[RMDB]
RNA sequence: GGGAACGACUCGAGUAGAGUCGAAAAUAAGCCACAGUUCCGACCGAAGGGGACGAGUGGGGAGAAGGGCGCCCCGAGGGGGGUCAUCUGGCAAAGAGAGGAGGAAUUUCGGAAGGAAUUCUCCCAAACGCUUGUACGUUCGCGUACAAGAAAAGAAACAACAACAACAAC
Reactivity to DMS in 0.01 (KOAc 150mM, MgCl2 10mM, bicine 150mM(pH8.5), 24C), signal-to-noise 9, nucleotides 027 to 129: u000a070a110g020c030c020a090c140a130g030u020u000c020c030g010a080c070c040g000a050a000g040g020g000g040a040c060g010a060g030u010g020g010g000g000a050g010a090a060g000g000g030c220g040c040c000c010c010g000a100g020g000g010g000g010g020u000c020a040u030c030u060g010g000c100a060a070a070g030a030g020a070g020g020a040g000g040a000a000u000u000u000c000g030g020a030a120g000g020a020a030u020u020c060u010c030c020c050a050a070a090c190g020
Reactivity to 2A3 in 0.01 (KOAc 150mM, MgCl2 10mM, bicine 150mM(pH8.5), 24C), signal-to-noise 9, nucleotides 027 to 129: u090a020a030g060c020c010a070c020a060g050u080u030c020c020g040a050c020c030g030a070a010g020g000g000g010a010c030g020a030g040u090g010g010g000g000a050g010a020a040g020g010g000c020g050c000c000c010c010g020a080g000g040g000g000g000g000u000c000a040u020c020u050g030g000c020a040a080a010g050a010g000a030g010g010a010g010g020a020a020u060u050u030c020g020g030a030a020g020g010a020a020u090u020c040u050c010c000c000a040a100a020c090g010